[RMDB]
RNA sequence: GGGAACGACUCGAGUAGAGUCGAAAAGAUAUGGAUCGAUCGGGAGCAGUCCUUCGGAAACGAAGGAUACUGCGAAGAACGAUCGAGUCCUAAGUCAAACCGUACUCUUCUUCGGAAGAGUACGGAAGUUACCUUUUAACUUCGGUUAAAAGGUAACAAAAGAAACAACAACAACAAC
Reactivity to DMS in 0.01 (KOAc 150mM, MgCl2 10mM, bicine 150mM(pH8.5), 24C), signal-to-noise 6, nucleotides 027 to 126: g010a000u000a010u010g000g010a100u000c010g000a000u000c000g000g000g010a020g030c000a020g000u000c000c000u000u000c000g020g000a000a000a020c010g000a010a010g000g000a090u010a020c070u000g010c000g000a080a120g000a220a220c020g010a010u000c000g010a020g000u010c000c000u000a000a090g000u000c010a100a090a210c000c000g000u000a000c000u000c000u000u000c000u000u010c230g020g000a000a000g010a010g010u000a010c000g000g000a010a030
Reactivity to 2A3 in 0.01 (KOAc 150mM, MgCl2 10mM, bicine 150mM(pH8.5), 24C), signal-to-noise 3, nucleotides 027 to 126: g000a000u010a000u040g000g000a000u010c000g000a000u000c000g020g020g010a020g000c000a000g010u010c000c000u000u000c000g000g000a010a000a000c000g000a000a010g010g000a010u080a060c000u010g000c010g040a040a020g000a000a000c010g000a000u000c000g000a010g050u100c000c000u000a000a010g010u000c000a010a060a060c000c000g000u000a000c000u000c010u010u010c010u030u060c230g120g000a000a000g000a000g000u000a010c000g010g000a010a000